[RMDB]
This 177-nucleotide RNA was probed chemically with DMS and 2A3. For DMS the reverse transcriptase was MarathonRT. 2A3 is a SHAPE reagent: it acylates the 2'-hydroxyl of flexible nucleotides of all four kinds.
RNA sequence: GGGAACGACUCGAGUAGAGUCGAAAAGAUUAAGUAGGACGCAUGAUCUUGAGCUCUUUUCCUAUACUUUGUCCUAUGGCCAGCUUUCUCCUUAUUACGAAGAGAUUGCGGGAUGUGGGUGCAGAGUAAAAUUGCCAACUUUCGAGUUGGCAAUUUUAAAAGAAACAACAACAACAAC
Reactivity to DMS in 0.01 (KOAc 150mM, MgCl2 10mM, bicine 150mM(pH8.5), 24C), signal-to-noise 2, nucleotides 027 to 126: g000a050u000u000a030a150g010u000a100g000g020a080c140g000c110a080u000g000a050u000c010u000u000g000a180g010c060u010c020u040u000u000u010c000c000u000a050u000a050c000u000u000u000g000u010c030c020u000a010u020g020g010c010c000a070g010c000u000u000u000c000u010c020c070u000u020a170u030u060a140c280g030a000a030g000a030g000a000u000u000g000c000g000g010g000a000u010g000u000g000g000g030u030g030c030a000g010a000g030u010
Reactivity to 2A3 in 0.01 (KOAc 150mM, MgCl2 10mM, bicine 150mM(pH8.5), 24C), signal-to-noise 3, nucleotides 027 to 126: g030a020u210u190a050a060g030u060a070g120g030a010c020g030c190a110u090g050a090u100c000u030u050g030a010g030c020u020c000u110u100u030u050c000c000u040a040u020a090c010u040u010u030g010u030c000c000u010a020u050g060g000c000c000a010g020c000u000u010u010c000u020c010c030u100u160a170u150u170a230c110g060a130a050g000a000g000a000u030u000g000c000g030g020g000a030u010g000u040g010g020g020u180g060c000a000g000a000g020u030

For 2A3 the reverse transcriptase was SuperScript II with manganese.